RNA sequence: GGGAACGACUCGAGUAGAGUCGAAAAGGUCUGGGGCAUUAAACAGCUCCAGGCAAGAGUCCUGGCUGUGGAAAGCUACCUAAGGGAUCAACAGCUCCUAGGAAUUUGGGGCUGCUCUGGAAAACUCCACCCCUAAUGCAUUCGUGCAUUAGGGGUGAAAAGAAACAACAACAACAAC
Reactivity to 2A3 in 0.01 (KOAc 150mM, MgCl2 10mM, bicine 150mM(pH8.5), 24C), signal-to-noise 2, nucleotides 027 to 126: g060g000u000c000u000g010g010g000g000c020a030u050u180a140a150a060c050a070g000c010u000c000c000a000g000g000c000a000a020g090a020g080u000c010c020u040g030g000c030u020g000u070g070g010a130a060a030g020c030u050a100c000c020u080a080a100g030g000g010a020u130c050a000a230c000a010g000c000u000c000c010u020a110g050g240a300a210u130u090u090g000g000g020g000c000u000g000c000u000c010u000g020g050a000a080a020a110c020u040c020
Reactivity to DMS in 0.01 (KOAc 150mM, MgCl2 10mM, bicine 150mM(pH8.5), 24C), signal-to-noise 2, nucleotides 027 to 126: g000g000u000c000u010g000g000g000g000c000a030u000u000a110a160a190c270a070g010c020u000c010c000a000g000g000c000a070a020g000a170g000u000c010c010u000g000g000c040u000g000u000g000g000a080a110a040g000c010u000a110c080c050u010a080a070g000g000g030a060u000c110a050a230c030a020g000c010u000c000c000u000a140g000g010a130a190u000u010u000g030g020g010g010c000u010g000c000u010c050u000g010g000a050a080a070a130c090u010c040
Structure probing data (2A3 and DMS) for a 177-nucleotide construct.
The reactions ran in a buffer of 150 mM KOAc, 10 mM MgCl2 and 150 mM bicine (pH 8.5), at 24 C.
2A3 adducts were read by reverse transcription with SuperScript II with manganese.